[RMDB]
RNA sequence: GGGAACGACUCGAGUAGAGUCGAAAAAGUGAGUAUGGCUCGUUACGACGAGCCAUACUCACAAAGGUUUUCCUAAAUCGUCGUGAGACGGACCUUGGAAAACCUAGUAUUUAAAUAACUAGGUCAAAUUAGCCUAGAUCCUUCGGGAUCUAGGCAAGACUCUUAACCAGUUCGCUGGUUAAGAGUCAAAAGAAACAACAACAACAAC
Reactivity to 2A3 in 0.01 (KOAc 150mM, MgCl2 10mM, bicine 150mM(pH8.5), 24C), signal-to-noise 1, nucleotides 027 to 156: a000g000u000g000a000g010u000a000u010g000g000c000u000c000g020u000u030a110c250g000a000c030g030a110g000c000c000a000u010a000c000u000c000a000c000a000a000a000g000g000u000u000u000u000c000c000u000a010a010a000u080c010g000u000c000g020u040g150a110g000a020c010g000g000a000c010c000u030u030g010g000a020a010a000a020c000c020u000a010g000u000a000u050u180u130a120a200a140u120a060a030c100u030a000g000g010u000c010a000a120a060u200u220a040g000c040c010u000a000g010a020u000c020c000u030u090c090g080g000g000a000u010c000u000a000g000g010c000a000a000

This 207-nucleotide RNA was probed chemically with 2A3. The reactions ran in a buffer of 150 mM KOAc, 10 mM MgCl2 and 150 mM bicine (pH 8.5), at 24 C. The data come from the RNA Mapping Database (RMDB), library M2RFPK. Reactivities are given for positions 27 through 156.